Source: RMDB library OK3TST, as collected in RNAgym. This 207-nucleotide RNA was probed chemically with 2A3 and DMS. DMS adducts were read by reverse transcription with MarathonRT. Values are in units of 0.01, from 0 to 300, in steps of 10.

RNA sequence: GGGAACGACUCGAGUAGAGUCGAAAACCGUCCCGCUGGGCCAGGUCGUCCAUCCGCAACGCGCACAGCAUCCACCAGCGGUCGCGGAAGCGCCUCAGCCAGGACGCCUAUCGCCGCAACAGCGUCCGUUUUCUGCAGCAGCGACGCCGCCAGGCGAUACUGGCACUCGUUUCGACGAGUGCCAGUAAAAAGAAACAACAACAACAAC
Reactivity to 2A3 in 0.01 (KOAc 150mM, MgCl2 10mM, bicine 150mM(pH8.5), 24C), signal-to-noise 2, nucleotides 027 to 156: c010c010g020u000c000c000c000g000c010u060g020g010g040c060c070a070g030g020u250c040g080u100c020c060a130u000c000c010g000c000a000a030c030g050c010g020c260a020c050a150g110c050a150u130c110c070a090c010c000a020g020c010g020g000u040c030g020c020g020g010a010a010g010c040g020c010c010u050c050a040g010c000c010a040g000g000a000c020g010c020c020u010a000u010c010g000c010c000g020c060a050a060c030a050g000c000g010u000c000c010g000u060u050u110u030c070u260g050c050a120g030c010a020g020c060g000a010c000g000c000c010g010c020c040a090g000g010c000g000a010
Reactivity to DMS in 0.01 (KOAc 150mM, MgCl2 10mM, bicine 150mM(pH8.5), 24C), signal-to-noise 1, nucleotides 027 to 156: c050c080g000u010c010c010c050g020c080u040g040g000g010c010c030a110g030g050u000c020g020u020c000c000a190u010c000c010g050c000a050a040c020g010c050g000c080a180c060a110g060c170a210u000c000c050a020c060c010a300g000c010g000g000u000c010g020c010g000g010a070a130g050c040g000c010c010u000c070a160g010c070c060a110g050g000a140c010g000c000c000u000a060u010c010g000c040c000g020c010a110a070c040a110g010c010g040u000c000c110g030u020u000u000u020c070u000g000c080a180g000c060a130g070c050g000a030c030g000c060c010g020c050c100a120g000g010c000g000a100